An RNA of 207 nucleotides, treated with DMS and 2A3 and read out base by base. Reactivities are given for positions 27 through 156. For 2A3 the reverse transcriptase was SuperScript II with manganese. For DMS the reverse transcriptase was MarathonRT. For 2A3, 2,036 sequencing reads were counted. The DMS profile rests on 2,121 reads.
RNA sequence: GGGAACGACUCGAGUAGAGUCGAAAACUCGCGCGAACAUAGAGGCGUGGAGCGCGACAUGAAUCAGCCUCAAUUAGAUUAAUGGUCGACAGAUCAGCGGCGAUCAGCGACCUAAUUAGAAGCCGCAACCGGAAGAGGAGACGCUCGACGGACGUCAGAUGCGUAAUAUAUUCGUAUAUUACGCAUCAAAAGAAACAACAACAACAAC
Reactivity to DMS in 0.01 (KOAc 150mM, MgCl2 10mM, bicine 150mM(pH8.5), 24C), signal-to-noise 2, nucleotides 027 to 156: c050u010c030g000c000g050c000g030a130a180c070a090u000a100g040a120g010g000c010g000u020g010g030a290g000c020g000c040g040a040c040a060u010g000a080a150u000c090a070g010c010c000u000c030a130a100u000u000a100g030a060u000u000a080a250u010g000g000u000c030g040a130c020a160g010a250u000c060a150g000c090g000g010c030g030a060u010c040a130g000c230g030a020c000c020u000a010a030u000u000a190g010a080a070g010c000c030g050c050a150a120c030c020g000g000a020a100g020a160g020g000a130g000a090c060g000c000u020c050g000a160c080g040g020a060c020g020u010c010a110
Reactivity to 2A3 in 0.01 (KOAc 150mM, MgCl2 10mM, bicine 150mM(pH8.5), 24C), signal-to-noise 4, nucleotides 027 to 156: c050u000c010g010c000g000c000g020a190a020c010a020u090a080g000a030g050g010c000g010u000g040g030a050g010c000g000c000g060a040c060a130u270g100a090a160u130c060a070g020c000c020u030c000a030a080u100u080a050g130a150u010u200a080a050u220g010g000u010c020g010a090c110a120g000a000u000c030a030g030c020g000g000c020g010a000u000c010a000g040c000g000a000c010c000u000a000a000u060u030a050g080a070a010g000c000c010g000c030a010a050c040c010g080g050a130a080g010a140g060g060a090g040a090c050g040c070u030c070g030a040c020g000g060a040c020g050u070c030a010